[RMDB]
RNA sequence: GGGAACGACUCGAGUAGAGUCGAAAAAGAGAGAAUCGAGAGAAAACUGGCUCUCCCUUAGCCAUCCGAGUGGACGUCCGUCCUCCUUCGGAUGCCCAGGUCGGACCGCGAGGAGGUGGAGAUGCCACUCUCAUUCACAGUUCGCUGUGAAUGAGAGAAAAGAAACAACAACAACAAC
Reactivity to 2A3 in 0.01 (KOAc 150mM, MgCl2 10mM, bicine 150mM(pH8.5), 24C), signal-to-noise 1, nucleotides 027 to 126: a000g110a000g020a000g020a030a150u150c140g030a030g000a000g050a130a130a040a170c080u070g010g000c000u000c000u000c010c010c010u050u040a020g000c010c010a010u000c010c010g010a000g020u040g050g020a030c000g030u000c020c030g040u030c030c010u090c040c000u080u020c020g040g000a020u020g000c000c000c010a070g070g070u030c030g010g010a050c030c030g060c040g020a090g070g040a020g060g050u130g010g000a040g000a050u230g000c000c000a030
Reactivity to DMS in 0.01 (KOAc 150mM, MgCl2 10mM, bicine 150mM(pH8.5), 24C), signal-to-noise 2, nucleotides 027 to 126: a070g000a060g010a110g000a030a040u000c110g000a080g000a050g020a130a060a100a120c200u000g010g000c020u000c030u000c010c000c020u000u010a080g010c060c080a110u000c000c040g000a040g060u000g000g010a010c010g000u000c050c040g020u000c060c020u000c040c060u020u010c000g000g020a070u000g020c010c000c030a020g020g010u000c070g010g000a090c040c300g010c150g000a080g010g000a040g000g040u010g000g000a040g000a090u020g010c000c000a020

An RNA of 177 nucleotides, treated with 2A3 and DMS and read out base by base. Values are in units of 0.01, from 0 to 300, in steps of 10. Reactivities are given for positions 27 through 126. For 2A3, 1,475 sequencing reads were counted. 2A3 adducts were read by reverse transcription with SuperScript II with manganese. The reactions ran in a buffer of 150 mM KOAc, 10 mM MgCl2 and 150 mM bicine (pH 8.5), at 24 C.